RNA sequence: GGGAACGACUCGAGUAGAGUCGAAAAGUACUGUGAGAUCUGGUAGUUCUUCGGCAUGUCGGGAUAGAAGUAGUUCUUCCUCGCGAAGACCGUACGCCUGCUCAAAGUACAGUUGAGGGCGCGGGCCUCGAAGCGCGAUAUUCGUAUCGCGCUUCGAAAAAGAAACAACAACAACAAC
Reactivity to 2A3 in 0.01 (KOAc 150mM, MgCl2 10mM, bicine 150mM(pH8.5), 24C), signal-to-noise 1, nucleotides 027 to 126: g000u010a000c010u010g010u020g000a030g010a050u230c170u160g010g010u030a170g060u110u100c040u040u010c040g020g050c050a090u250g030u240c030g050g040g020a030u170a240g010a020a000g080u280a040g110u020u030c020u000u030c010c020u000c010g090c010g040a000a020g070a170c000c000g000u010a010c060g040c010c010u000g020c000u000c000a060a080a000g010u000a000c040a050g000u010u130g040a100g010g030g040c040g030c070g010g170g000c040c000
Reactivity to DMS in 0.01 (KOAc 150mM, MgCl2 10mM, bicine 150mM(pH8.5), 24C), signal-to-noise 1, nucleotides 027 to 126: g020u000a010c010u010g000u010g000a040g000a060u000c060u010g010g030u000a160g020u010u010c030u000u000c010g010g050c100a110u010g010u010c130g010g020g000a040u000a010g000a040a020g000u020a130g010u010u010c010u000u000c010c020u010c080g000c010g020a030a040g010a070c110c030g030u010a060c170g010c000c000u010g000c040u010c030a050a020a010g020u000a020c020a130g000u000u030g040a100g000g010g000c000g020c130g000g000g010c060c080